[RMDB]
Annotation: An RNA of 207 nucleotides, treated with 2A3 and read out base by base. For 2A3, 510 sequencing reads were counted. 2A3 adducts were read by reverse transcription with SuperScript II with manganese.
RNA sequence: GGGAACGACUCGAGUAGAGUCGAAAACUAAAGCAAAUAUCGUAGCUACUUACCAUAGGUUUGAUCUACCCAAACCUCAGCCUGUUGAGGAAGUGGUAGCCCUGCCUACUAAAAACGACUUUGAAGUACUCAAGGUCGAAGAAGUUCCACAGGAGAGCCCGAUGAUUAUGUUCGCAUAAUCAUCGGGAAAAGAAACAACAACAACAAC
Reactivity to 2A3 in 0.01 (KOAc 150mM, MgCl2 10mM, bicine 150mM(pH8.5), 24C), signal-to-noise 1, nucleotides 027 to 156: c060u130a070a110a030g080c120a060a130a150u290a160u190c090g070u100a030g000c030u020a010c050u080u110a110c060c030a080u090a100g010g090u040u090u080g030a100u020c020u020a010c010c000c020a020a040a130c010c000u020c020a010g080c020c110u090g050u110u060g020a020g010g020a110a010g060u130g100g000u010a000g000c040c000c000u000g010c000c040u070a020c130u140a090a150a030a030a000c000g020a010c050u000u000u050g070a180a050g020u080a080c030u000c020a000a000g000g000u030c000g000a050a010g070a020a000g020u070u010c100c070a000c000a060g060g000a080g000a010g100